Source: RMDB library RNAMAK, as collected in RNAgym. The record gives the reactivity of an RNA of 207 nucleotides to 2A3. The RNA was probed in 150 mM KOAc, 10 mM MgCl2 and 150 mM bicine (pH 8.5) at 24 C.
[RMDB]
RNA sequence: GGGAACGACUCGAGUAGAGUCGAAAAGGGGUCGUUCGGGACUAAUGGAGUCCGUGGCUGAAGCCUCCACGGCCAUGGGACGUUGAAAUUAGUUCUCUAGCGUGACGACGGAGGCACCCGUAGCAGAUCUCUAAUCAUUCGUGAUUAGAGAUCUGAAUAUACGAGUGUUCUUCGGAACACUCGUAUAAAAAGAAACAACAACAACAAC
Reactivity to 2A3 in 0.01 (KOAc 150mM, MgCl2 10mM, bicine 150mM(pH8.5), 24C), signal-to-noise 1, nucleotides 027 to 156: g000g010g040g020u040c030g020u100u130c060g030g020g000a000c000u000a000a000u020g000g000a030g000u000c000c000g000u000g010g050c000u010g050a020a030g010c000c010u050c000c010a010c020g000g030c010c020a020u070g230g040g000a000c000g140u190u030g000a000a000a000u000u000a000g040u140u000c030u020c000u020a050g090c050g260u270g070a020c070g010a020c040g000g000a000g010g000c000a010c000c050c020g060u070a060g140c000a000g020a010u000c000u020c000u000a000a020u000c020a030u000u210c200g160u030g010a000u000u000a000g000a010g000a000u010c000u000g000a000a000